[RMDB]
RNA sequence: GGGAACGACUCGAGUAGAGUCGAAAAUCAAAUCAGGAGAUUGUGGAUUUCCACUAGUGGUAAGGACAAAUCAAGGCCUAAAAGUAAUUGCAAUUCAUAAUGCAGUUACUCCAACAUCAAUGGCCUUCUUUGCCUCAAUAAGUCAACAAGAUUUUGGCAACCUACGAAGGUUCGCCUUCGUAGGUUGAAAAGAAACAACAACAACAAC
Reactivity to 2A3 in 0.01 (KOAc 150mM, MgCl2 10mM, bicine 150mM(pH8.5), 24C), signal-to-noise 4, nucleotides 027 to 156: u050c010a050a000a010u030c030a040g140g050a090g060a090u090u100g100u110g160g020a090u050u060u090c000c010a020c040u070a040g000u010g020g000u030a020a010g030g010a040c030a020a070a030u130c030a060a010g000g000c000c010u040a100a080a010a000g000u000a000a000u020u000g000c000a000a060u070u090c070a120u230a290a070u070g000c000a000g000u000u000a000c000u000c050c010a170a120c040a110u140c050a050a180u120g010g000c050c000u010u000c000u000u000u010g010c000c000u030c000a030a090u140a100a010g060u060c000a010a040c010a070a110g040a110u020u020u040u080g030g000
Reactivity to DMS in 0.01 (KOAc 150mM, MgCl2 10mM, bicine 150mM(pH8.5), 24C), signal-to-noise 1, nucleotides 027 to 156: u000c080a030a030a060u000c040a160g000g000a140g030a120u000u000g020u060g040g010a160u000u010u010c000c030a070c130u010a090g000u000g000g010u000a180a180g020g020a020c050a000a000a040u000c010a020a030g060g010c040c000u020a300a130a050a000g000u000a010a030u000u000g010c000a110a160u000u000c280a180u000a130a130u000g000c000a030g030u000u000a000c000u000c010c010a080a040c110a140u020c110a300a110u000g030g010c000c050u010u000c000u000u030u000g000c010c000u000c010a050a020u000a020a160g000u000c020a030a080c040a030a080g000a200u000u000u010u000g050g000